RNA sequence: GGGAACGACUCGAGUAGAGUCGAAAACUAACACAUUGCAAAGCUUUUUUUGGAAACCAGUAGCAAUGUUCACAGAACACACACAAACAGAACUCGAGGAGUCAAGAGCUAUGUCCAGUGGUGGAAAUGAAGGACAAGGGCUACCCUACCCUCGGCACUAUGCUCUACCCUUCGGGGUAGAGCAUAGAAAAGAAACAACAACAACAAC
Reactivity to 2A3 in 0.01 (KOAc 150mM, MgCl2 10mM, bicine 150mM(pH8.5), 24C), signal-to-noise 1, nucleotides 027 to 156: c030u110a160a020c040a000c000a080u000u010g000c000a020a120a300g130c140u210u130u110u120u090u150u170g160g000a150a020a010c050c090a160g020u060a030g000c050a050a030u050g040u160u100c080a140c050a070g140a200a000c020a030c010a000c000a000c020a140a180a070c100a050g010a050a000c000u070c140g020a030g020g010a120g020u070c060a050a050g010a010g120c010u050a050u090g020u000c030c000a050g040u090g120g050u060g040g100a020a060a190u110g000a060a140g020g000a010c000a010a020g120g000g030c010u130a150c030c000c000u000a020c010c030c000u000c000g030g000c030a000